[RMDB]
RNA sequence: GGGAACGACUCGAGUAGAGUCGAAAACGAUCUGUUCGCAGAUCGAGCUACGGAGACGUAGCAAAGCGAGCGAGGGCACGGGCGCUCGCACUACCGGAAUUAUAGCCAUAUCCACGUGUGCUAGGAUAUGGCCGUGCCCAAAGAAACAGCACACGAACAGUCGGAUAUGAUUCGUCAUAUCCGACUGAAAAGAAACAACAACAACAAC
Reactivity to 2A3 in 0.01 (KOAc 150mM, MgCl2 10mM, bicine 150mM(pH8.5), 24C), signal-to-noise 3, nucleotides 027 to 156: c000g000a000u000c010u010g050u060u080c260g020c100a000g010a000u000c000g000a020g000c000u000a000c010g030g040a050g020a050c030g030u010a010g000c040a010a070a010g000c000g000a000g000c000g000a070g000g000g010c010a000c000g080g140g020c020g060c000u010c000g040c040a020c020u070a060c000c010g070g150a100a070u280u140a120u190a240g010c010c000a000u000a010u000c010c000a050c150g010u010g000u000g000c000u010a010g000g000a000u000a000u010g010g010c000c010g000u000g000c000c000c010a060a170a030g090a050a120a000c040a030g010c000a000c010a000c010g000a070a020

The data come from the RNA Mapping Database (RMDB), library OK3TST. This 207-nucleotide RNA was probed chemically with 2A3. For 2A3 the reverse transcriptase was SuperScript II with manganese. The RNA was probed in 150 mM KOAc, 10 mM MgCl2 and 150 mM bicine (pH 8.5) at 24 C.